An RNA of 177 nucleotides, treated with DMS and 2A3 and read out base by base. The DMS profile rests on 15,891 reads. It was measured as part of the RMDB library OK1LIB. The reactions ran in a buffer of 150 mM KOAc, 10 mM MgCl2 and 150 mM bicine (pH 8.5), at 24 C.
[RMDB]
RNA sequence: GGGAACGACUCGAGUAGAGUCGAAAAUCGCGGUAGACAGUGCUCAAAAGUUUGAGCUGGCGCGUUGGAGGGUGGGGCGGGUGUGGAGGAGGCCCAACGGUUUGGCAAACUUUAAUCACUUGCCGCGCAGUUAUUUUUAGUUCGCUAAAAAUAACUGAAAAGAAACAACAACAACAAC
Reactivity to DMS in 0.01 (KOAc 150mM, MgCl2 10mM, bicine 150mM(pH8.5), 24C), signal-to-noise 5, nucleotides 027 to 126: u020c030g030c010g000g010u010a010g020a140c210a070g000u010g020c080u010c060a050a030a100a070g000u020u010u000g020a060g020c000u000g000g000c050g020c040g010u020u020g000g010a140g000g000g000u060g000g000g000g000c170g000g010g000u020g000u010g010g000a010g000g000a080g010g010c100c010c040a030a060c140g000g010u000u010u020g000g010c010a020a040a010c030u010u000u000a140a140u030c120a050c050u000u000g010c000c000g000c080g010
Reactivity to 2A3 in 0.01 (KOAc 150mM, MgCl2 10mM, bicine 150mM(pH8.5), 24C), signal-to-noise 8, nucleotides 027 to 126: u070c000g000c000g000g010u010a010g030a080c080a030g030u010g040c010u030c060a010a020a020a060g010u010u030u030g030a040g020c020u020g010g020c050g000c010g080u050u070g040g010a070g020g040g050u210g030g010g020g040c100g010g020g020u160g010u050g010g010a020g000g030a010g010g000c000c000c000a030a010c010g030g000u030u040u070g050g000c000a000a010a020c000u060u060u110a050a060u130c020a020c030u020u040g000c010c000g000c010g000